Structure probing data (2A3) for a 207-nucleotide construct. It was measured as part of the RMDB library M2RFPK. As a SHAPE reagent, 2A3 marks flexible, mostly unpaired nucleotides at the ribose 2'-OH.

[RMDB]
RNA sequence: GGGAACGACUCGAGUAGAGUCGAAAAGCAUCGACGACGGUCCUGCCAUGAGACCGUAACGAGGACAUGUCGCCUCGAAUGGCGUCGGGGAGCCGGCAGAUUACCCCAAGGAUGAGCGCCUAAUGCCUAUACCCGAUUCGCUUCGGCGAAUCGGGAACUGGGAAGAGUAGUUCGCUACUCUUCCCAGAAAAGAAACAACAACAACAAC
Reactivity to 2A3 in 0.01 (KOAc 150mM, MgCl2 10mM, bicine 150mM(pH8.5), 24C), signal-to-noise 1, nucleotides 027 to 156: g020c000a060u070c030g070a060c040g010a000c000g000g000u000c020c030u120g100c090c020a200u180g060a110g020a110c040c030g000u020a020a040c000g000a010g000g050a020c040a130u200g040u090c100g010c010c000u010c000g000a040a050u100g020g000c000g000u040c060g000g030g000g000a010g040c040c060g010g020c050a020g000a110u060u180a090c000c000c000c000a030a040g060g010a030u110g080a030g060c020g010c050c040u080a080a030u110g070c000c010u100a120u070a120c010c000c000g000a000u000u000c000g000c000u030u010c080g080g000c000g000a000a000u010c020g000g000g000a000a000
Source information
The RNA was probed in 150 mM KOAc, 10 mM MgCl2 and 150 mM bicine (pH 8.5) at 24 C.